[RMDB]
RNA sequence: GGGAACGACUCGAGUAGAGUCGAAAAAAAAGAUAUGGACCGUUCAGCUGUCCAUGGCAAGGCUACUCGGAAACGAGAGCUGAUGACCCAUGGGAACUCGGCAAAUCUUACGGUCCUAAGUCAAAAACAUACGUGCUUAGUUCGCUAAGCACGUAUGAAAAGAAACAACAACAACAAC
Reactivity to 2A3 in 0.01 (KOAc 150mM, MgCl2 10mM, bicine 150mM(pH8.5), 24C), signal-to-noise 2, nucleotides 027 to 126: a000a010a000a010g050a030u070a020u060g000g000a010c000c000g010u040u100c110a080g000c010u060g030u030c010c000a000u010g000g000c010a080a230g010g000c020u180a300c000u300c000g050g000a090a080a030c000g020a000g010a010g000c010u000g020a010u080g040a020c010c000c010a000u000g030g010g060a120a110c120u070c140g070g000c030a060a110a300u100c070u130u150a010c010g000g000u000c000c010u010a120a010g000u000c030a020a000a150a000a030
Reactivity to DMS in 0.01 (KOAc 150mM, MgCl2 10mM, bicine 150mM(pH8.5), 24C), signal-to-noise 3, nucleotides 027 to 126: a050a040a050a050g000a030u010a300u020g000g010a010c000c000g000u000u000c300a190g000c030u000g000u020c000c000a000u000g000g000c010a040a130g000g000c010u000a110c000u000c010g000g020a070a060a060c010g010a010g000a040g010c000u000g010a060u020g000a120c300c000c010a010u010g010g010g000a030a100c250u010c130g010g030c010a070a080a030u010c180u020u000a010c010g000g000u000c000c000u000a000a100g010u020c010a060a070a080a070a110